This 207-nucleotide RNA was probed chemically with 2A3 and DMS. The reactions ran in a buffer of 150 mM KOAc, 10 mM MgCl2 and 150 mM bicine (pH 8.5), at 24 C. High 2A3 reactivity points to a flexible backbone, as in loops and unpaired stretches. DMS (dimethyl sulfate) methylates the pairing face of unpaired adenines and cytosines. 2A3 adducts were read by reverse transcription with SuperScript II with manganese.
RNA sequence: GGGAACGACUCGAGUAGAGUCGAAAAGACACGUAGUUCGCUACGUGUCAAAAAACCGUAGGCCUGUGGACAGACUUGGAUUUAGACUUCGAAAGAGGUCUUGUCAGUCUGCCACUGGGCCUAAACGGAAAAAGAUGUCGCCUUCGGGCGACAUCAAGAUGUGAUAGGGAUUCGUCCCUAUCACAUCAAAAGAAACAACAACAACAAC
Reactivity to 2A3 in 0.01 (KOAc 150mM, MgCl2 10mM, bicine 150mM(pH8.5), 24C), signal-to-noise 2, nucleotides 027 to 156: g000a000c000a000c020g000u000a000g040u070u060c210g020c160u000a000c000g000u010g000u010c000a000a000a000a000a000a000c010c000g000u000a000g000g000c010c010u000g020u010g030g020a230c010a000g000a000c010u100u300g080g010a030u300u100u150a000g000a000c000u030u010c010g040a060a100a080g000a000g010g000u010c000u000u000g000u000c000a000g000u000c000u000g000c000c000a000c000u000g000g000g030c000c000u010a000a000a000c030g060g050a100a080a000a000a020g000a000u010g000u000c010g010c000c000u010u110c290g070g010g010c000g000a000c000a000u000c000a000a000
Reactivity to DMS in 0.01 (KOAc 150mM, MgCl2 10mM, bicine 150mM(pH8.5), 24C), signal-to-noise 1, nucleotides 027 to 156: g000a040c000a010c000g030u000a010g010u000u010c300g010c020u000a020c000g010u030g010u010c000a000a050a020a070a080a060c000c020g030u000a030g010g000c000c000u000g030u000g000g030a130c010a010g000a020c000u000u020g030g010a030u010u010u000a040g020a030c010u000u000c010g000a260a140a220g000a030g000g020u000c010u010u030g030u000c000a080g000u000c010u000g020c000c010a000c030u000g030g000g030c000c000u000a000a010a040c030g000g000a070a120a140a130a130g130a020u000g010u000c020g000c010c000u010u000c300g050g030g020c020g010a010c000a000u010c010a050a050